[RMDB]
RNA sequence: GGGAACGACUCGAGUAGAGUCGAAAAUUAAAGAUUAUAGCGAAGGAUGGUAUCAAGCAAAUGCGUGCUUCCUUGCACUUCAUAUACCUCGAGAGUUGUGGAAUCUGAAACCAAGAAUAUUUGAACCCAACGACAAGCCAUUCGUGGCUUGUCGUUGAAAAGAAACAACAACAACAAC
Reactivity to DMS in 0.01 (KOAc 150mM, MgCl2 10mM, bicine 150mM(pH8.5), 24C), signal-to-noise 2, nucleotides 027 to 126: u030u020a240a120a040g010a020u000u070a150u010a030g000c050g020a140a090g000g000a030u000g000g030u060a010u000c050a070a100g010c150a000a080a040u000g000c300g040u010g000c040u030u000c090c070u030u030g000c010a000c150u000u000c070a040u010a040u030a030c020c000u000c060g000a140g000a150g030u000u000g050u000g000g000a050a050u000c000u000g000a170a000a130c050c030a060a000g000a040a170u000a090u070u000u060g010a070a030c010c110
Reactivity to 2A3 in 0.01 (KOAc 150mM, MgCl2 10mM, bicine 150mM(pH8.5), 24C), signal-to-noise 1, nucleotides 027 to 126: u020u000a060a000a000g020a020u050u050a030u300a280g000c080g100a060a000g000g040a020u090g000g050u040a090u090c050a090a000g120c040a090a140a140u300g000c020g040u000g060c000u010u000c020c000u000u080g060c050a000c000u000u000c000a000u140a000u060a120c000c000u000c000g260a200g000a000g000u000u000g050u050g000g120a100a000u040c000u000g020a290a050a000c000c000a000a000g140a090a060u140a170u300u020u120g120a090a120c040c000

Background: An RNA of 177 nucleotides, treated with DMS and 2A3 and read out base by base. Reactivities are rounded to 0.1 and cut off at 0 and 3. For 2A3 the reverse transcriptase was SuperScript II with manganese. For 2A3, 499 sequencing reads were counted. It was measured as part of the RMDB library OK1LIB.